This 177-nucleotide RNA was probed chemically with 2A3 and DMS. Values cover nucleotides 27 to 126.

RNA sequence: GGGAACGACUCGAGUAGAGUCGAAAAAAAACUGAGCAGAUGACACCGGAACAGUUAUUUGUCAUUUUGGAUCGCUUCGAAGAACAGACGCGCGAGGCGAACUUGCGUAGUUUGCAGCAAUUAGCAGGUCUAAAGGAUGAUUCGUCAUCCUUUAGACAAAAGAAACAACAACAACAAC
Reactivity to 2A3 in 0.01 (KOAc 150mM, MgCl2 10mM, bicine 150mM(pH8.5), 24C), signal-to-noise 5, nucleotides 027 to 126: a000a000a000a000c040u030g000a020g000c010a000g010a040u010g010a020c010a020c070c070g140g040a070a030c040a080g040u090u070a080u050u100u060g030u040c020a030u020u030u080u080g080g040a080u050c050g000c040u030u030c060g110a140a080g020a110a030c040a040g070a060c030g020c000g020c010g030a000g020g020c100g050a090a110c020u020u010g000c000g020u040a090g030u090u030u050g050c040a050g000c010a030a120u090u050a140g070c070a030g040
Reactivity to DMS in 0.01 (KOAc 150mM, MgCl2 10mM, bicine 150mM(pH8.5), 24C), signal-to-noise 7, nucleotides 027 to 126: a060a020a030a020c080u010g000a100g020c040a080g000a040u000g010a040c030a070c160c040g010g010a060a050c140a070g000u010u000a080u010u010u000g010u000c030a070u000u000u000u000g010g010a090u000c050g020c040u000u000c040g010a080a060g000a080a110c080a060g010a050c100g000c080g010c010g000a030g010g010c100g000a030a080c030u000u000g020c020g010u000a040g010u000u000u000g010c080a080g010c080a050a070u010u010a080g010c080a120g010